[RMDB]
RNA sequence: GGGAACGACUCGAGUAGAGUCGAAAAGAUAUGGAACUCGCCAGACAUGAUGGGUCGUAUGACUCAUAAUCGGAAACGAUUAUGAGUCAUACGACCGACCAUCAACAGCUGGCCGAGUUCCUAAGUCGAGUAAUAGGUUCUUCGGAACCUAUUACUCAAAAGAAACAACAACAACAAC
Reactivity to DMS in 0.01 (KOAc 150mM, MgCl2 10mM, bicine 150mM(pH8.5), 24C), signal-to-noise 2, nucleotides 027 to 126: g000a040u000a300u000g010g030a010a010c000u010c020g000c030c000a000g000a050c090a300u010g010a030u000g000g010g020u030c000g040u000a000u020g010a020c000u000c000a020u000a010a000u000c010g000g000a130a060a270c020g020a000u010u010a010u000g000a080g010u000c020a000u000a000c030g000a010c030c170g000a060c300c030a000u000c040a020a130c300a170g000c000u000g000g030c100c030g010a000g000u000u000c000c010u000a000a040g020u000c130
Chemical mapping of a 177-nucleotide RNA with DMS. The reactions ran in a buffer of 150 mM KOAc, 10 mM MgCl2 and 150 mM bicine (pH 8.5), at 24 C. Values are in units of 0.01, from 0 to 300, in steps of 10.